[RMDB]
RNA sequence: GGGAACGACUCGAGUAGAGUCGAAAAUCUCAACUGCCCUUCAAAAUAGAUGACUUUUCAAUUAGCUGUACUUCUCAAGGAAAAGAUUUAGGUGCUAUUAGCACAGAGCUCCAUCAUAGCAUCUGUUCAGAGGGCAGCAGAGUUAAAAUGUAGACAACUAAUAAUACGACUUCGGUCGUAUUAUUAGAAAAGAAACAACAACAACAAC
Reactivity to DMS in 0.01 (KOAc 150mM, MgCl2 10mM, bicine 150mM(pH8.5), 24C), signal-to-noise 2, nucleotides 027 to 156: u010c020u000c020a110a050c000u000g010c010c010c000u000u000c010a110a100a100a120u000a050g000a060u000g000a140c010u010u000u020u020c090a050a100u000u010a150g070c030u000g000u000a120c050u000u000c090u000c060a070a150g000g010a050a050a040a080g000a190u000u010u000a040g070g010u010g020c020u000a100u010u000a060g000c020a060c010a080g000a080g000c050u000c030c030a080u010c070a100u000a070g000c010a030u000c010u000g020u000u000c090a160g000a020g010g010g010c020a000g030c030a030g000a050g000u000u010a070a050a030a100u000g020u020a090g010a200c090a060a180
Reactivity to 2A3 in 0.01 (KOAc 150mM, MgCl2 10mM, bicine 150mM(pH8.5), 24C), signal-to-noise 4, nucleotides 027 to 156: u020c010u000c000a030a040c010u000g000c000c010c010u030u070c120a300a300a080a080u050a020g000a030u040g100a200c010u070u080u070u070c100a100a100u080u050a080g050c050u040g040u170a090c030u130u080c070u060c130a060a100g070g030a090a060a040a050g050a060u080u170u260a120g000g040u010g020c010u070a220u290u130a140g000c010a020c010a020g060a010g020c010u070c050c020a100u140c040a030u080a050g020c010a000u000c000u010g000u010u000c000a020g000a000g040g010g010c000a000g000c010a010g000a000g040u020u040a020a060a080a100u240g060u200a090g050a070c010a060a010